[RMDB]
RNA sequence: GGGAACGACUCGAGUAGAGUCGAAAAGGGGUACGGCUUAACGUGGCCGGCACGGGUUCAUUCGGUAGCUGGCACUGCGACGAGCGAUGUGGAUGAUCUCGACUCGGUGGUGGCCGUCGUCGAUGGCAUGACAUCUCUUUUUCGAAAGAGAUGUCAUAAAAGAAACAACAACAACAAC
Reactivity to DMS in 0.01 (KOAc 150mM, MgCl2 10mM, bicine 150mM(pH8.5), 24C), signal-to-noise 9, nucleotides 027 to 126: g000g010g000g020u010a060c050g010g000c030u010u010a080a140c130g030u010g010g010c010c010g010g020c070a080c030g010g010g010u010u010c170a120u010u000c020g010g010u000a090g020c010u000g010g010c020a080c080u010g010c080g010a100c090g000a040g010c030g010a080u010g010u010g010g000a110u010g010a080u000c060u000c020g010a140c060u000c030g010g010u010g010g010u000g000g010c020c010g010u000c080g010u000c040g000a130u000g010g010c160
Reactivity to 2A3 in 0.01 (KOAc 150mM, MgCl2 10mM, bicine 150mM(pH8.5), 24C), signal-to-noise 9, nucleotides 027 to 126: g050g000g000g010u120a030c020g020g020c010u080u080a160a020c050g080u110g110g020c000c000g000g000c000a010c030g030g010g000u170u150c070a090u160u050c030g080g040u080a050g030c010u010g060g000c040a030c110u150g040c040g080a150c030g010a030g010c020g040a070u130g070u140g130g040a120u110g050a070u070c010u010c030g160a190c030u020c020g060g000u070g030g090u060g060g010c030c010g000u010c020g070u010c020g030a080u090g060g030c080

Background:
Structure probing data (DMS and 2A3) for a 177-nucleotide construct. For 2A3 the reverse transcriptase was SuperScript II with manganese. It was measured as part of the RMDB library OK2TRN.